[RMDB]
An RNA of 177 nucleotides, treated with 2A3 and DMS and read out base by base.
For 2A3, 5,218 sequencing reads were counted.
The DMS profile rests on 28,180 reads.

RNA sequence: GGGAACGACUCGAGUAGAGUCGAAAAUACUCAUGGGAAGUCGGCGUGACUCCCGACUAACGUGGAUGUCCGCUUUCUGGCUCCAGGCAAAGAGUGUUGGUGCGGACGUUGAUUAGCCGCGCGCCAACAUAGUCGGGUAUUUCGAUACCCGACUAUGAAAAGAAACAACAACAACAAC
Reactivity to 2A3 in 0.01 (KOAc 150mM, MgCl2 10mM, bicine 150mM(pH8.5), 24C), signal-to-noise 3, nucleotides 027 to 126: u110a030c000u020c020a100u050g020g000g020a050a030g010u000c000g030g050c030g050u140g010a010c010u000c000c000c000g010a050c050u060a090a050c030g040u130g030g040a040u110g000u000c000c000g000c000u030u080u070c020u070g020g000c010u000c000c000a000g030g030c020a000a070a000g010a010g010u050g010u010u020g030g000u020g000c000g010g010a040c030g030u040u080g090a190u090u110a010g020c000c000g010c000g000c000g000c020c000a020a010
Reactivity to DMS in 0.01 (KOAc 150mM, MgCl2 10mM, bicine 150mM(pH8.5), 24C), signal-to-noise 8, nucleotides 027 to 126: u010a050c010u000c010a140u010g000g010g000a150a050g010u010c030g010g000c060g000u040g010a040c040u010c030c000c000g010a150c200u050a110a120c090g020u030g010g020a030u030g000u010c000c000g000c050u000u030u010c090u010g000g000c040u020c000c010a060g000g010c150a090a110a100g000a030g010u000g000u000u000g010g030u010g010c000g000g000a100c060g010u020u030g000a130u020u020a070g000c020c020g000c010g010c020g000c010c010a040a110